[RMDB]
RNA sequence: GGGAACGACUCGAGUAGAGUCGAAAAGGGCGACGUGUCGAAAAAAUUCGCGGUCGAGCCGACCGUGCAACAGCGGCUCGAAACGAAGAUGCAGGAAUCGAGCGAGUUUCUCAAGCGCAUCAACAUCCUGCCCGUGCUUGAGCUCGAAGGCGAAAAGCAUUAACUCCCCUUUCGAGGGGAGUUAAUGAAAAGAAACAACAACAACAAC
Reactivity to DMS in 0.01 (KOAc 150mM, MgCl2 10mM, bicine 150mM(pH8.5), 24C), signal-to-noise 2, nucleotides 027 to 156: g000g030g030c050g000a120c060g000u000g040u020c040g030a000a030a090a120a100a180u020u000c020g020c000g010g000u010c010g000a090g000c050c010g000a090c020c020g050u000g020c170a090a100c140a080g010c000g010g000c000u000c000g070a010a060a030c010g000a070a060g020a140u000g040c070a130g000g020a060a120u000c020g000a110g000c030g000a040g020u010u000u000c030u000c010a070a050g030c000g040c020a090u000c050a060a120c040a080u000c020c000u010g000c020c050c040g030u000g030c010u020u000g010a030g010c000u010c010g000a140a150g010g010c050g010a080a060a110a120g000
Reactivity to 2A3 in 0.01 (KOAc 150mM, MgCl2 10mM, bicine 150mM(pH8.5), 24C), signal-to-noise 3, nucleotides 027 to 156: g010g000g000c030g030a100c030g120u070g030u140c060g040a040a040a020a020a000a180u100u020c020g010c040g050g040u010c010g050a030g080c020c100g080a180c010c030g060u160g120c130a140a050c020a060g020c000g020g000c010u020c020g020a020a020a020c080g010a030a010g020a030u110g020c000a010g100g070a070a050u050c020g010a000g010c020g010a060g060u000u090u010c010u000c030a020a020g020c000g000c040a080u080c040a050a110c000a160u040c000c010u030g000c000c010c000g010u000g010c010u020u010g000a000g000c010u020c010g040a050a060g070g030c070g080a060a060a060a020g000
Annotation: Structure probing data (DMS and 2A3) for a 207-nucleotide construct. The DMS profile rests on 2,863 reads. Reactivities are rounded to 0.1 and cut off at 0 and 3. The reactions ran in a buffer of 150 mM KOAc, 10 mM MgCl2 and 150 mM bicine (pH 8.5), at 24 C. 2A3 adducts were read by reverse transcription with SuperScript II with manganese.